[RMDB]
RNA sequence: GGGAACGACUCGAGUAGAGUCGAAAAACCAAGAUUUAAAUUAAGCAAGAGAUAUAAGGCCGCUCCUUAUAUUGCGACUUGCUUAAACUUGUGACUGAAUAAUCAACGAUUUAACAAGUUCAAGUGGCUGCAUACCAUAAUUCGUUAUGGUAUGCAGAAAAGAAACAACAACAACAAC
Reactivity to 2A3 in 0.01 (KOAc 150mM, MgCl2 10mM, bicine 150mM(pH8.5), 24C), signal-to-noise 8, nucleotides 027 to 126: a000c040c010a050a010g090a060u180u200u210a070a110a070u050u020a000a010g000c000a000a000g010a000g010a010u000a000u000a010a000g010g010c130c040g020c110u190c040c000u000u000a000u000a000u000u110g060c020g090a070c010u000u000g000c000u000u010a010a010a000c000u010u010g070u100g050a000c020u010g030a050a090u080a080a030u080c070a130a110c130g030a040u010u030u090a070a080c110a080a000g000u020u020c020a030a000g020u040g120g000
Reactivity to DMS in 0.01 (KOAc 150mM, MgCl2 10mM, bicine 150mM(pH8.5), 24C), signal-to-noise 5, nucleotides 027 to 126: a110c010c010a140a100g010a180u020u010u010a060a070a170u010u000a010a020g000c000a010a010g010a300g000a000u000a000u000a000a000g000g010c300c290g010c240u030c010c000u000u000a000u000a000u010u010g000c210g020a060c000u000u000g010c000u000u000a000a030a040c000u000u000g010u030g000a040c020u000g000a140a090u020a010a030u000c060a140a140c200g000a050u000u000u020a050a060c100a120a020g000u010u000c020a020a020g010u010g010g010